RNA sequence: GGGAACGACUCGAGUAGAGUCGAAAAGCGAAUUUGCUUACUGGGCAUGUUUUGGGCUGGUCGGCGUCAGCUAUUUCGGUAUACGAGAGAUGCAGAAUAUUUUAUUUGAAUAUCAACGACUUAAAUCACUCAACUGAACUUUCGAGUUCAGUUGAGUAAAAGAAACAACAACAACAAC
Reactivity to 2A3 in 0.01 (KOAc 150mM, MgCl2 10mM, bicine 150mM(pH8.5), 24C), signal-to-noise 4, nucleotides 027 to 126: g060c060g010a050a090u070u150u280g020c020u030u090a110c010u050g000g060g000c020a060u080g070u110u150u090u050g080g000g020c000u030g000g010u040c020g000g000c000g030u030c010a000g000c010u050a100u030u070u020c000g010g030u120a150u000a160c010g000a000g000a000g010a050u100g040c050a040g090a140a050u060a130u080u060u050u020a220u110u110u160g070a030a030u060a030u110c040a070a060c010g100a030c020u070u170a050a010a030u130c030
Reactivity to DMS in 0.01 (KOAc 150mM, MgCl2 10mM, bicine 150mM(pH8.5), 24C), signal-to-noise 3, nucleotides 027 to 126: g030c000g020a130a100u010u010u010g000c020u000u010a070c060u000g000g000g030c040a030u020g000u010u000u000u000g010g010g030c070u020g000g020u010c060g010g010c040g000u000c030a070g020c020u010a070u000u010u000c030g000g030u020a070u020a100c040g000a090g020a060g000a110u010g000c050a090g020a100a050u000a020u010u000u010u040a150u020u020u030g000a050a040u000a030u010c080a090a130c120g000a080c050u010u000a020a050a090u030c160

Annotation:
An RNA of 177 nucleotides, treated with 2A3 and DMS and read out base by base. Values cover nucleotides 27 to 126. The reactions ran in a buffer of 150 mM KOAc, 10 mM MgCl2 and 150 mM bicine (pH 8.5), at 24 C. High 2A3 reactivity points to a flexible backbone, as in loops and unpaired stretches. For 2A3 the reverse transcriptase was SuperScript II with manganese.